[RMDB]
RNA sequence: GGGAACGACUCGAGUAGAGUCGAAAACGACGAUGACGACGAGCACGACCUUGGCGAGGGUCAUGAAACAACCAUAGGGCAGCGUACGGUCACCAUAUUCCGUCAGAUAUACUUUGAACGUUCACUACAUAGGUGGCUGAUUCGUCAGCCACCUAUGAAAAGAAACAACAACAACAAC
Reactivity to 2A3 in 0.01 (KOAc 150mM, MgCl2 10mM, bicine 150mM(pH8.5), 24C), signal-to-noise 5, nucleotides 027 to 126: c050g050a000c040g080a060u120g050a030c050g030a020c020g040a010g020c020a040c050g040a080c010c010u050u120g080g030c040g020a080g040g030g000u040c000a060u060g060a080a080a030c110a020a020c000c030a060u150a110g020g060g000c020a020g030c040g040u080a060c090g020g010u030c010a020c020c000a020u040a100u170u040c010c020g030u040c030a020g050a090u070a030u020a160c030u070u130u270g040a080a040c060g000u040u060c030a080c130u070a050
Reactivity to DMS in 0.01 (KOAc 150mM, MgCl2 10mM, bicine 150mM(pH8.5), 24C), signal-to-noise 3, nucleotides 027 to 126: c130g020a080c100g000a090u030g000a090c060g000a110c090g040a100g000c000a090c100g000a060c030c010u000u030g000g040c120g020a060g000g000g010u000c030a060u000g010a070a110a140c180a040a090c020c010a050u010a060g000g010g000c010a040g000c080g030u010a100c090g000g000u010c020a020c020c030a120u000a130u000u020c050c010g000u000c010a040g000a110u010a090u000a070c060u020u050u000g040a090a150c060g000u040u020c020a070c040u010a130